[RMDB]
RNA sequence: GGGAACGACUCGAGUAGAGUCGAAAACGAUCGCAGACCAUGGUCGACUAGCGGUACUAUGAUCGUACCUAGAGCUAGGAUCAUACAGCUAGAGGAUCAGAUGGAUCUCGAGAUCGAUCAGGAUCACCAAAUCCAGACUUUUCGAAGUCUGGAUUUGAAAAGAAACAACAACAACAAC
Reactivity to 2A3 in 0.01 (KOAc 150mM, MgCl2 10mM, bicine 150mM(pH8.5), 24C), signal-to-noise 4, nucleotides 027 to 126: c010g000a000u020c020g000c080a000g010a020c000c000a020u020g000g020u030c070g250a070c020u000a010g000c020g080g050u100a100c050u040a050u050g020a010u010c060g130u060a030c010c000u080a100g010a020g160c090u040a020g090g000a010u010c000a000u010a030c040a020g000c010u020a000g020a040g030g080a010u020c010a010g080a210u120g030g090a260u020c010u010c070g110a130g000a030u030c000g000a040u090c050a030g150g000a040u060c020a040c100
Reactivity to DMS in 0.01 (KOAc 150mM, MgCl2 10mM, bicine 150mM(pH8.5), 24C), signal-to-noise 8, nucleotides 027 to 126: c030g020a020u000c000g010c070a030g010a050c010c010a050u000g010g020u000c000g000a270c010u000a010g010c010g020g030u000a100c300u000a060u000g000a010u000c020g010u000a030c040c060u010a130g010a140g030c300u000a050g000g000a010u000c000a030u000a020c060a170g000c010u000a010g000a070g010g000a010u000c000a040g010a130u010g010g000a100u000c000u000c120g010a060g010a020u000c000g010a120u010c150a120g010g010a120u010c070a150c170
Record summary:
An RNA of 177 nucleotides, treated with 2A3 and DMS and read out base by base. High DMS reactivity at an A or C suggests that its Watson-Crick edge is free. For 2A3 the reverse transcriptase was SuperScript II with manganese. The RNA was probed in 150 mM KOAc, 10 mM MgCl2 and 150 mM bicine (pH 8.5) at 24 C. Values cover nucleotides 27 to 126. 2A3 is a SHAPE reagent: it acylates the 2'-hydroxyl of flexible nucleotides of all four kinds.